[RMDB]
RNA sequence: GGGAACGACUCGAGUAGAGUCGAAAAAGAUCUUCUGCGUCACUUGCAAGACAGUGUGGCUAUUCUGACUCGUGAAGAUCAACGUCAUGUGAACGCUGUCCAUGCAGCAGCAAAUAUGCCUGCAAAAUCACGUAGGCACUUUCGAGUGCCUACGUGAAAAAGAAACAACAACAACAAC
Reactivity to DMS in 0.01 (KOAc 150mM, MgCl2 10mM, bicine 150mM(pH8.5), 24C), signal-to-noise 1, nucleotides 027 to 126: a050g020a010u020c020u000u010c020u010g010c190g000u000c020a030c090u010u010g000c060a070a120g000a060c060a020g010u020g010u030g010g000c070u000a110u010u010c070u010g010a080c020u000c090g000u000g000a010a040g010a020u000c070a070a150c130g010u000c040a120u000g040u000g000a170a080c080g010c020u000g000u000c070c130a170u000g000c090a100g010c060a020g050c080a050a040a000u010a090u040g010c010c020u010g020c110a050a100a060a200
Reactivity to 2A3 in 0.01 (KOAc 150mM, MgCl2 10mM, bicine 150mM(pH8.5), 24C), signal-to-noise 1, nucleotides 027 to 126: a000g000a020u000c000u020u010c010u030g050c050g030u000c030a010c050u000u080g050c020a090a010g110a110c030a100g060u060g020u080g170g000c030u010a120u130u100c040u100g020a040c030u030c070g110u060g030a040a040g000a080u000c000a030a000c060g120u070c020a010u100g050u050g170a080a000c020g000c000u040g040u000c010c000a030u070g020c000a040g070c030a010g000c010a030a060a120u220a060u100g000c010c040u080g000c000a020a000a020a210